[RMDB]
RNA sequence: GGGAACGACUCGAGUAGAGUCGAAAAAGCCAUCACAAAGAUAUGGCAGGCGUGUGAAGGACAAUUGUGUGCAUUCAUUAGCUGCUUCCGCCAAGCAAGAAUUGUCAUCAAAAGGAAGAAAUUACCAGCGCUGCUACAUUUAAACUCAGCCUGGGCAAUUUAAUGGAUCAUUCGUGAUCCAUUAAAUAAAAGAAACAACAACAACAAC
Reactivity to 2A3 in 0.01 (KOAc 150mM, MgCl2 10mM, bicine 150mM(pH8.5), 24C), signal-to-noise 4, nucleotides 027 to 156: a010g040c030c000a030u060c020a020c050a120a220a030g030a090u100a020u100g020g000c010a020g000g050c030g020u070g000u020g080a060a030g040g020a050c040a050a130u180u100g060u050g020u040g090c050a070u020u100c030a040u060u130a010g010c020u040g010c010u070u010c020c010g000c030c010a030a020g000c010a010a020g030a110a090u080u100g040u080c030a060u030c020a100a080a070a010g060g020a040a050g040a030a130a030u170u120a090c000c010a040g020c050g010c180u010g040c000u080a030c010a090u140u270u210a060a060a060c070u030c030a000g000c000c000u000g000g000g000c010a020
Reactivity to DMS in 0.01 (KOAc 150mM, MgCl2 10mM, bicine 150mM(pH8.5), 24C), signal-to-noise 3, nucleotides 027 to 156: a080g010c000c000a050u010c120a210c060a100a130a180g010a220u000a060u010g000g040c000a170g040g000c060g040u000g020u000g000a100a060g030g020a060c040a070a110u010u010g020u010g030u010g020c050a110u000u000c020a080u000u000a110g010c020u000g000c030u000u000c000c040g010c050c020a080a130g040c040a060a100g010a090a050u000u000g020u000c050a100u000c080a040a060a120a130g000g000a110a060g000a100a060a150u000u010a060c040c000a050g020c080g030c000u010g010c110u010a070c060a080u010u000u000a060a090a100c130u000c010a040g010c030c010u010g010g030g000c020a030

An RNA of 207 nucleotides, treated with 2A3 and DMS and read out base by base.
2A3 adducts were read by reverse transcription with SuperScript II with manganese.
For DMS, 5,249 sequencing reads were counted.
DMS adducts were read by reverse transcription with MarathonRT.